RNA sequence: GGGAACGACUCGAGUAGAGUCGAAAAAGAAGGCGGCCAUGAGUCCGUUGCAGGCCCGCCACAGCGCUGGCGCCAUGGCUCGGAGAACACGGCGCGGGGCGGUGAGUCCUGCCACGUGCGGGGCGGUGUGGUCAGCUACUCCGGAAUGUGGCAGGGACACGGCAAAAUUAUUCGUAAUUUUGCCGUGAAAAGAAACAACAACAACAAC
Reactivity to 2A3 in 0.01 (KOAc 150mM, MgCl2 10mM, bicine 150mM(pH8.5), 24C), signal-to-noise 2, nucleotides 027 to 156: a030g150a030a040g050g020c030g000g020c010c030a120u110g060a030g070u060c050c040g040u020u060g040c030a050g020g020c070c080c010g020c040c010a070c020a040g020c030g010c060u050g110g000c000g000c020c000a040u060g060g000c020u040c150g080g000a100g020a050a020c050a010c100g010g030c000g000c030g010g020g000g020c000g000g030u080g010a020g050u030c000c000u000g000c000c000a000c010g010u030g020c010g000g000g000g030c020g000g010u080g010u020g020g050u110c030a000g010c030u030a010c010u000c010c010g000g020a220a010u050g000u000g000g040c010a000g040g000g000a000
Chemical mapping of a 207-nucleotide RNA with 2A3. For 2A3 the reverse transcriptase was SuperScript II with manganese. Reactivities are given for positions 27 through 156. The RNA was probed in 150 mM KOAc, 10 mM MgCl2 and 150 mM bicine (pH 8.5) at 24 C. Reactivities are rounded to 0.1 and cut off at 0 and 3.